[RMDB]
RNA sequence: GGGAACGACUCGAGUAGAGUCGAAAACAGUAAAUAUGAUAACUAAGGACAUUGUAUUGGAAGGUGCUGAAGAAGAAAAGAUUUGUCAAGCACUAACAUCAGCAUUAGAAAAAGGUAAUCUAACAAUGAAUGCUUGGCCAGAAGUACAAACAUAUCACUCAGGUAGGGGAUUCGUCCCCUACCUGAGAAAAGAAACAACAACAACAAC
Reactivity to 2A3 in 0.01 (KOAc 150mM, MgCl2 10mM, bicine 150mM(pH8.5), 24C), signal-to-noise 1, nucleotides 027 to 156: c140a010g050u290a090a040a140u120a070u130g030a060u070a170a010c080u110a100a080g090g000a000c000a060u040u080g070u080a100u130u180g080g000a070a020g020g010u040g000c020u070g000a040a040g030a020a040g050a000a300a000a000g110a030u130u090u060g040u000c000a030a010g000c000a000c090u060a070a020c000a040u020c010a000g040c030a070u000u090a020g120a000a180a000a000a000g190g000u080a090a000u000c000u120a000a050c060a040a130u170g000a060a020u000g000c000u010u000g000g000c000c000a060g000a100a000g050u030a010c080a000a020a000c070a000u300a050u270c050a010